[RMDB]
RNA sequence: GGGAACGACUCGAGUAGAGUCGAAAAUGGUCUUCGGACCAUAGGUCUCCUAAGUCAAAGGGAGGAGGAUAAGGGCGAAGAACAGAGUCGGAAACGACUCUGGGAGCCUGAAGCCUCCGACGAUCUUUGAUAUGGAAUUCUGUGUCUUCGGACACAAACAAUUGGUGCAUUUCGAUGCACCAAUUGUAAAAGAAACAACAACAACAAC
Reactivity to DMS in 0.01 (KOAc 150mM, MgCl2 10mM, bicine 150mM(pH8.5), 24C), signal-to-noise 2, nucleotides 027 to 156: u000g010g000u000c000u010u000c200g100g020a010c000c000a020u000a000g000g030u000c040u000c020c000u010a060a270g020u000c020a020a030a090g020g000g010a110g050g010a020g010g010a040u020a280a230g000g000g010c010g020a110a170g010a190a220c000a030g000a060g030u010c000g000g000a120a110a290c010g010a000c000u020c010u000g000g000g000a300g000c000c000u000g000a100a180g000c000c000u000c000c000g020a040c150g000a020u010c000u000u000u010g070a060u000a300u000g010g000a090a080u000u010c020u000g000u000g000u010c000u000u020c300g030g000a030c000a010c000a040a090
Reactivity to 2A3 in 0.01 (KOAc 150mM, MgCl2 10mM, bicine 150mM(pH8.5), 24C), signal-to-noise 2, nucleotides 027 to 156: u020g000g000u030c020u060u090c300g120g000a010c010c010a000u010a030g110g090u060c010u000c050c010u100a190a080g000u000c000a000a000a000g000g000g000a020g000g000a000g000g000a000u030a050a080g020g030g010c060g160a260a030g000a090a000c000a010g000a000g000u020c020g000g000a060a020a110c020g000a000c000u000c000u000g010g000g000a010g000c000c010u010g010a030a040g040c010c000u000c000c000g000a000c000g000a000u010c000u020u000u010g000a030u040a090u100g070g070a060a170u250u140c120u180g010u010g010u000c000u000u070c270g090g000a000c000a000c000a030a080
The record gives the reactivity of an RNA of 207 nucleotides to DMS and 2A3.
The DMS profile rests on 2,918 reads.
For 2A3 the reverse transcriptase was SuperScript II with manganese.
For DMS the reverse transcriptase was MarathonRT.
The RNA was probed in 150 mM KOAc, 10 mM MgCl2 and 150 mM bicine (pH 8.5) at 24 C.